[RMDB]
The data come from the RNA Mapping Database (RMDB), library M2PK50. The record gives the reactivity of an RNA of 177 nucleotides to DMS and 2A3. Values are in units of 0.01, from 0 to 300, in steps of 10. The RNA was probed in 150 mM KOAc, 10 mM MgCl2 and 150 mM bicine (pH 8.5) at 24 C. For DMS the reverse transcriptase was MarathonRT. For 2A3 the reverse transcriptase was SuperScript II with manganese.
RNA sequence: GGGAACGACUCGAGUAGAGUCGAAAACCUCCUACCUUCGGGUAGGAGGAAAGCACGCGCAACGUAAGCGACAUGCAAGUCAACGCGAACGAACGUAAAUAAAAACGCAGGGCUUCGGCCCUGCGAACAUUCCAAUCCUGUUCGCAGGAUUGGAAUGAAAAGAAACAACAACAACAAC
Reactivity to DMS in 0.01 (KOAc 150mM, MgCl2 10mM, bicine 150mM(pH8.5), 24C), signal-to-noise 2, nucleotides 027 to 126: c000c000u000c000c000u000a010c000c000u000u000c150g040g010g020u000a010g000g010a000g030g000a010a010a140g010c120a050c120g000c040g010c080a120a080c090g000u010a040a180g020c030g020a060c140a090u000g000c120a080a130g030u000c030a080a050c080g010c010g010a140a050c050g010a080a060c150g000u000a070a070a080u010a050a050a090a100a120c000g030c010a000g000g000g000c010u000u000c170g010g000c020c000c000u000g000c010g000a000a050
Reactivity to 2A3 in 0.01 (KOAc 150mM, MgCl2 10mM, bicine 150mM(pH8.5), 24C), signal-to-noise 2, nucleotides 027 to 126: c000c000u060c000c000u000a000c000c000u060u070c240g110g000g000u010a030g010g020a000g010g000a000a000a020g070c000a010c110g030c010g030c040a030a200c130g050u100a040a090g020c030g030a100c040a070u120g000c080a150a100g020u080c040a070a100c000g030c020g070a100a040c050g010a090a030c020g050u100a000a190a090u160a020a110a140a000a000c000g020c000a010g000g000g000c000u040u090c160g110g000c010c000c000u010g000c000g000a000a000